The data come from the RNA Mapping Database (RMDB), library OK2TST. Structure probing data (DMS and 2A3) for a 177-nucleotide construct. For DMS the reverse transcriptase was MarathonRT.
[RMDB]
RNA sequence: GGGAACGACUCGAGUAGAGUCGAAAAUGCAGUCAUUAGCUGACCGUUUUGCCGAAGCUUUUGCAGAACACUUACAUGAACGUAUUCGUAAAGAGUUCUGGGGCUAUAAAGCUGACGAACAGCUCAAACUACUGGAUCCAUUCGUGGAUCCAGUAGUAAAAGAAACAACAACAACAAC
Reactivity to DMS in 0.01 (KOAc 150mM, MgCl2 10mM, bicine 150mM(pH8.5), 24C), signal-to-noise 3, nucleotides 027 to 126: u010g010c120a170g020u010c110a070u010u000a060g020c010u000g000a110c170c000g000u000u000u010u000g020c000c010g010a220a090g000c010u000u000u010u030g020c000a030g030a010a010c010a110c020u000u000a030c100a110u000g030a050a120c300g000u000a100u000u000c060g010u000a020a030a050g030a070g010u000u000c000u000g000g000g000g000c000u010a090u020a080a060a100g010c010u000g010a050c020g020a060a130c050a010g000c020u010c200a080a070
Reactivity to 2A3 in 0.01 (KOAc 150mM, MgCl2 10mM, bicine 150mM(pH8.5), 24C), signal-to-noise 3, nucleotides 027 to 126: u120g010c030a010g100u070c030a100u070u140a010g000c010u020g010a020c040c000g010u010u000u130u060g000c000c000g030a030a010g010c010u060u120u260u300g150c020a010g020a000a010c030a010c020u020u040a030c020a130u110g090a090a020c070g050u180a250u140u070c010g000u030a110a090a070g030a010g000u000u000c000u000g020g000g010g000c010u010a000u070a100a020a000g000c000u010g000a020c010g000a100a010c000a010g020c010u040c110a110a100

The DMS profile rests on 2,213 reads. The reactions ran in a buffer of 150 mM KOAc, 10 mM MgCl2 and 150 mM bicine (pH 8.5), at 24 C.